RNA sequence: GGGAACGACUCGAGUAGAGUCGAAAAGCACCUGGGUUCGCCCAGGUGCAAAGAUCAGUAGCAUGCAAGAUCAAAUCCGAUACGAUGCUACAGGGAAACCAAAAAGCCAGUGCUUCGGCACUGGCAAGUUUAAGCCUAAGUUCGCUUAGGCUUAAACAAAAGAAACAACAACAACAAC
Reactivity to DMS in 0.01 (KOAc 150mM, MgCl2 10mM, bicine 150mM(pH8.5), 24C), signal-to-noise 3, nucleotides 027 to 126: g010c000a000c000c000u010g000g010g030u000u030c220g010c010c000c000a010g010g010u000g000c000a010a020a050g000a130u000c050a070g010u000a010g010c010a000u000g010c080a120a170g000a060u000c060a080a090a220u020c090c090g010a060u000a070c080g000a030u010g000c000u010a000c010a110g020g000g000a060a080a150c050c020a030a080a080a080a120g000c000c000a010g010u000g000c000u000u010c190g030g020c000a010c000u000g000g010c000a000a010
Reactivity to 2A3 in 0.01 (KOAc 150mM, MgCl2 10mM, bicine 150mM(pH8.5), 24C), signal-to-noise 3, nucleotides 027 to 126: g000c000a000c010c000u000g000g020g060u040u070c200g100c020c000c010a000g000g000u000g010c000a010a000a000g010a040u050c030a010g010u010a000g020c000a010u170g090c070a120a080g060a190u030c020a050a110a170u120c090c060g010a010u020a070c030g000a010u010g010c010u000a000c000a000g060g020g010a070a040a030c020c000a090a040a050a020a000g010c000c000a010g010u010g000c000u060u120c240g110g000c000a000c010u000g000g000c000a000a000
Notes
This 177-nucleotide RNA was probed chemically with DMS and 2A3. It was measured as part of the RMDB library M2PK50. The RNA was probed in 150 mM KOAc, 10 mM MgCl2 and 150 mM bicine (pH 8.5) at 24 C. For DMS, 2,926 sequencing reads were counted.